[RMDB]
RNA sequence: GGGAACGACUCGAGUAGAGUCGAAAAACAUGCUGGUUGGUGAUGGGAGUUUUUCAAGCGCCUUCUUCCUACGGUAUUUUGCAGAGGGUAAUCUCAGAAAAGGUGUUUCACAGUCCUGUGGCAUGAAUAAGCGAGAUAGUUUCGACUAUCUCGCUUAAAAAGAAACAACAACAACAAC
Reactivity to DMS in 0.01 (KOAc 150mM, MgCl2 10mM, bicine 150mM(pH8.5), 24C), signal-to-noise 2, nucleotides 027 to 126: a060c060a030u000g020c020u010g000g000u000u010g020g030u010g000a060u030g000g000g000a070g010u020u000u020u000u000c120a090a070g000c170g010c020c010u000u010c060u000u000c040c030u000a070c200g010g000u020a040u010u000u000u010g030c120a070g000a080g010g000g000u030a030a080u050c010u020c080a050g000a050a030a060a030g010g030u010g000u000u030u020c040a090c130a100g000u010c010c010u000g020u010g000g000c000a020u010g000a050a070
Reactivity to 2A3 in 0.01 (KOAc 150mM, MgCl2 10mM, bicine 150mM(pH8.5), 24C), signal-to-noise 1, nucleotides 027 to 126: a000c060a010u070g010c000u000g080g110u250u000g000g000u120g050a090u210g010g130g030a060g050u000u000u000u000u200c040a090a030g070c000g000c000c040u050u000c030u000u000c000c000u030a060c070g130g050u040a160u180u120u150u060g010c020a000g000a000g010g080g010u020a060a080u020c030u000c020a000g180a000a010a000a000g020g000u080g000u080u010u140c090a150c040a060g130u050c000c000u020g010u000g100g000c000a010u070g010a070a120